[RMDB]
RNA sequence: GGGAACGACUCGAGUAGAGUCGAAAACUCACAGUGUCAGUCACACUCUCACAGAGAGUCAGUGACUCUCAGAGUGACACUCUCACAGAGUCUGUGUCACAGAGUGACUGAGAGACUGAGAGAGUGAACCUGGAUUGUUCUUCGGAACAAUCCAGGUAAAAGAAACAACAACAACAAC
Reactivity to 2A3 in 0.01 (KOAc 150mM, MgCl2 10mM, bicine 150mM(pH8.5), 24C), signal-to-noise 1, nucleotides 027 to 126: c010u050c000a060c040a050g090u090g040u130c010a020g000u030c030a020c000a020c010u140c000u020c010a210c070a100g010a000g010a000g060u000c010a070g170u070g190a010c000u030c000u000c010a120g060a010g040u000g000a000c000a010c000u000c000u010c000a300c090a150g000a000g080u050c080u100g030u010g020u010c000a000c010a000g030a000g050u010g020a030c000u040g030a000g000a020g040a030c000u000g000a000g010a010g000a000g100u040g050a010
Reactivity to DMS in 0.01 (KOAc 150mM, MgCl2 10mM, bicine 150mM(pH8.5), 24C), signal-to-noise 2, nucleotides 027 to 126: c000u000c000a110c060a040g040u000g030u000c020a000g000u000c030a190c040a200c030u000c080u000c160a120c170a220g000a020g020a080g000u000c020a120g000u010g020a020c000u000c030u000c060a090g010a190g020u000g010a030c010a000c000u000c000u010c010a150c240a130g010a120g000u000c050u000g020u000g000u020c020a020c030a050g010a030g000u000g000a050c000u000g000a020g010a120g000a050c000u000g020a110g020a050g030a060g010u000g000a070